[RMDB]
RNA sequence: GGGAACGACUCGAGUAGAGUCGAAAAGGCUCAGAGAGCAGAACAUCGGUGCCGCGAUUCACUCCAGUGUGCCGAGAGACUGGACACCAGAAGAGGGUGCGCUGCUCACCGUCGCCGAUGACGGUGGCCUCAGGUCCUCUUUCGAGAGGACCUGAGGAAAAGAAACAACAACAACAAC
Reactivity to 2A3 in 0.01 (KOAc 150mM, MgCl2 10mM, bicine 150mM(pH8.5), 24C), signal-to-noise 1, nucleotides 027 to 126: g010g020c070u010c020a020g140a000g010a000g150c050a020g020a100a040c040a100u040c050g010g000u040g040c030c000g090c040g030a000u080u170c020a030c080u000c070c010a060g010u010g030u050g140c000c030g100a070g000a000g010a060c010u040g020g000a030c010a050c040c030a070g100a160a020g020a130g080g040g040u010g000c000g020c020u040g000c000u000c010a000c020c000g030u010c000g040c030c180g100a050u150g020a030c000g020g000u010g020g010
Reactivity to DMS in 0.01 (KOAc 150mM, MgCl2 10mM, bicine 150mM(pH8.5), 24C), signal-to-noise 1, nucleotides 027 to 126: g020g010c000u000c100a070g000a140g010a080g030c050a050g010a060a150c160a070u000c020g030g000u000g010c050c060g000c150g020a140u030u000c050a060c110u000c050c010a060g020u000g030u000g000c060c030g000a100g000a090g000a050c090u010g000g010a170c020a070c100c030a100g030a070a060g000a190g000g030g020u000g000c160g010c010u000g010c100u000c020a040c020c000g010u000c020g010c150c110g010a070u000g000a030c000g010g020u000g000g010

Structure probing data (2A3 and DMS) for a 177-nucleotide construct.
For 2A3 the reverse transcriptase was SuperScript II with manganese.
Values cover nucleotides 27 to 126.